RNA sequence: GGGAACGACUCGAGUAGAGUCGAAAAAGCACGGUUUUUGAGGACGCAUUUUGUCCGUGCGGUAAUGCCCUCCUUUACACUUUCUCGCAUGCUGCGGGAGUGUGGAGAGGAAACAAAAGCUAGUCUCGAUAGGCGGUUAACUUCGGUUAACCGCCAACUGAACUUGAACGUUCGCGUUCAAGUUCAGAAAAGAAACAACAACAACAAC
Reactivity to 2A3 in 0.01 (KOAc 150mM, MgCl2 10mM, bicine 150mM(pH8.5), 24C), signal-to-noise 2, nucleotides 027 to 156: a000g000c010a010c020g010g000u000u000u000u000u010g050a080g000g000a020c050g020c120a160u010u000u010u010g010u000c000c010g000u010g000c020g040g060u130a050a060u280g020c000c000c020u000c010c010u050u060u050a020c010a000c030u060u200u040c010u000c000g010c050a100u300g030c110u170g000c120g000g000g000a000g000u020g000u000g000g000a040g000a020g030g020a020a050a000c000a000a010a010a000g080c040u090a010g030u000c010u000c040g070a130u170a110g000g000c000g000g000u000u000a000a000c000u020u010c130g080g000u000u000a000a000c000c000g000c000c000a000a000

Chemical mapping of a 207-nucleotide RNA with 2A3. For 2A3, 1,856 sequencing reads were counted. The data come from the RNA Mapping Database (RMDB), library M2RFOK. The RNA was probed in 150 mM KOAc, 10 mM MgCl2 and 150 mM bicine (pH 8.5) at 24 C. Values cover nucleotides 27 to 156.